[RMDB]
RNA sequence: GGGAACGACUCGAGUAGAGUCGAAAAUAAUUUGUCUGGUCAAUUCCGUUAACGAACGAGACCUCAACUAACUAAUUGGUGAUGUUUAUGUUUUAAAUAUAAAUAUCCGUGUUAGAAGGACCAUGUGACUCAGCGGAAGAUUCGUCUUCCGCUGAGUAAAAGAAACAACAACAACAAC
Reactivity to 2A3 in 0.01 (KOAc 150mM, MgCl2 10mM, bicine 150mM(pH8.5), 24C), signal-to-noise 2, nucleotides 027 to 126: u040a000a060u070u070u150g060u000c080u030g020g010u000c050a040a100u160u000c020c070g060u050u080a090a080c160g050a030a010c010g040a050g040a160c040c010u030c050a060a090c020u070a000a010c000u030a180a160u120u250g110g000u170g040a000u010g000u000u000u000a010u030g070u000u020u100u230a060a090a000u080a010u000a030a000a000u020a000u040c000c000g030u050g020u030u000a050g090a220a000g030g000a010c000c060a080u070g000u000g060
Reactivity to DMS in 0.01 (KOAc 150mM, MgCl2 10mM, bicine 150mM(pH8.5), 24C), signal-to-noise 1, nucleotides 027 to 126: u070a050a030u010u000u020g000u040c080u010g000g020u000c000a180a050u040u010c120c010g030u000u020a090a130c230g020a070a000c050g000a260g000a130c050c030u010c020a090a200c030u020a060a050c000u000a020a060u020u000g000g000u000g020a000u000g000u000u000u000a010u000g000u000u000u010u000a030a010a040u030a000u050a000a000a000u010a000u000c010c030g040u010g000u010u000a000g010a100a100g000g000a130c010c030a040u000g030u000g000
This 177-nucleotide RNA was probed chemically with 2A3 and DMS. The DMS profile rests on 1,344 reads. The RNA was probed in 150 mM KOAc, 10 mM MgCl2 and 150 mM bicine (pH 8.5) at 24 C.